[RMDB]
RNA sequence: GGGAACGACUCGAGUAGAGUCGAAAAACGUUGAUAUGGAUUUACUCCGAGGAGACGAACUACCACGAAGAGGGGAAACUCUACCCGUGGCGUCUCCGUUUGACGAGUAAGUCCUAAGUCAACAUGCUAACUAUCUCGUUCGCGAGAUAGAAAAGAAACAACAACAACAAC
Reactivity to DMS in 0.01 (KOAc 150mM, MgCl2 10mM, bicine 150mM(pH8.5), 24C), signal-to-noise 7, nucleotides 027 to 129: a060c160g010u000u000g020a000u000a030u020g040g010a030u010u000u000a000c020u020c020c020g020a070g030g020a000g010a000c010g020a090a030c080u120a290c000c000a020c020g020a090a090g090a140g000g000g000g000a030a000a030c020u020c010u030a220c150c150c010g000u020g010g010c030g020u010c020u000c010c030g000u030u030u020g030a140c300g010a000g020u000a000a000g000u050c000c000u000a000a050g000u020c020a020a000c000a090u080g020c040u000a080a110
Reactivity to 2A3 in 0.01 (KOAc 150mM, MgCl2 10mM, bicine 150mM(pH8.5), 24C), signal-to-noise 9, nucleotides 027 to 129: a000c090g000u000u000g000a000u000a000u030g000g000a000u000u000u000a000c000u000c010c010g010a040g000g000a010g020a010c010g010a020a020c070u250a080c100c000a000c000g030a070a030g010a020g070g000g000g000a000a000a000c000u030c010u060a220c010c020c010g000u010g000g000c000g000u000c000u010c010c000g000u050u040u050g010a000c000g000a000g000u000a000a000g000u000c000c000u000a000a000g000u000c000a000a000c000a010u070g030c000u080a080a080